[RMDB]
RNA sequence: GGGAACGACUCGAGUAGAGUCGAAAAGUUGCGCGAGACUCUAGGCCCGUGACAUGUUACGGACAAAUUCCGUGACCGUGUUAAGGCCAGCAUUGAAGAGCGUACCUAGCUGCGUUUCAACCUGCAUGGGUUGGGGCGGCUUAGCGGAUUAAGGAAACUAGCACAUUUUGUUCGCAAAAUGUGCUAGAAAAGAAACAACAACAACAAC
Reactivity to DMS in 0.01 (KOAc 150mM, MgCl2 10mM, bicine 150mM(pH8.5), 24C), signal-to-noise 2, nucleotides 027 to 156: g040u000u010g020c000g030c100g010a230g020a080c010u020c010u000a110g010g040c050c000c010g040u000g030a020c010a000u000g010u000u000a010c000g060g000a040c050a170a100a210u000u020c000c000g000u020g010a010c010c110g010u000g020u000u000a300a110g000g030c020c020a120g000c090a180u000u030g030a190a170g000a070g000c030g010u010a020c000c010u000a040g020c010u000g040c020g020u010u000u000c000a020a020c010c020u010g000c290a180u010g030g010g050u000u000g030g030g010g000c000g010g010c000u000u000a010g010c030g020g000a150u010u010a110a180g010g020a250a100a210
Reactivity to 2A3 in 0.01 (KOAc 150mM, MgCl2 10mM, bicine 150mM(pH8.5), 24C), signal-to-noise 2, nucleotides 027 to 156: g050u040u130g080c070g030c010g030a060g010a030c040u000c010u020a050g000g020c060c000c030g130u240g010a010c010a050u080g010u010u000a000c000g000g050a010c110a170a240a180u250u020c010c010g000u000g000a020c070c120g040u000g010u020u000a000a010g000g000c010c000a000g010c030a070u060u170g110a140a080g020a000g010c020g000u060a090c000c010u010a010g000c000u020g010c030g010u050u040u110c000a000a000c010c000u020g010c150a100u300g000g020g000u000u000g000g030g000g000c000g020g000c000u000u020a020g000c010g040g080a050u150u130a140a060g050g060a130a070a020